[RMDB]
RNA sequence: GGGAACGACUCGAGUAGAGUCGAAAACAGAAUUGCAAGUUCGUUUUGCAAGCGGCGGAUGCGCAUUGCACAAAGGACCGUGUACUUGCCCGCUCACAUUGGGCGGUUCCGUUGCUGCAAACUUGUUAGUUAAGCACAAUUUCGAUUGUGCUUAACUAAAAGAAACAACAACAACAAC
Reactivity to DMS in 0.01 (KOAc 150mM, MgCl2 10mM, bicine 150mM(pH8.5), 24C), signal-to-noise 3, nucleotides 027 to 126: c060a150g030a070a090u030u010g010c080a050a100g000u010u010c160g000u000u000u000u000g010c010a040a060g000c000g000g000c000g020g000a010u000g030c080g010c010a040u000u000g010c020a010c060a040a070a170g020g010a130c240c180g020u000g020u000a000c170u010u010g010c000c000c000g000c000u000c010a150c220a200u020u030g020g000g000c000g000g000u000u000c010c000g040u000u000g030c000u000g000c000a010a030a060c030u000u000g000u000u000
Reactivity to 2A3 in 0.01 (KOAc 150mM, MgCl2 10mM, bicine 150mM(pH8.5), 24C), signal-to-noise 6, nucleotides 027 to 126: c020a010g160a120a130u160u140g020c040a080a060g040u070u120c070g030u040u070u060u070g020c090a160a090g000c000g010g000c000g000g010a010u040g100c020g000c040a000u000u030g000c010a010c020a020a150a090g270g110a090c070c080g000u000g000u000a080c140u020u020g000c000c010c010g000c010u020c000a170c070a190u210u300g000g000g000c000g000g000u010u000c000c000g010u010u010g000c010u010g000c000a010a010a020c010u010u020g100u080u030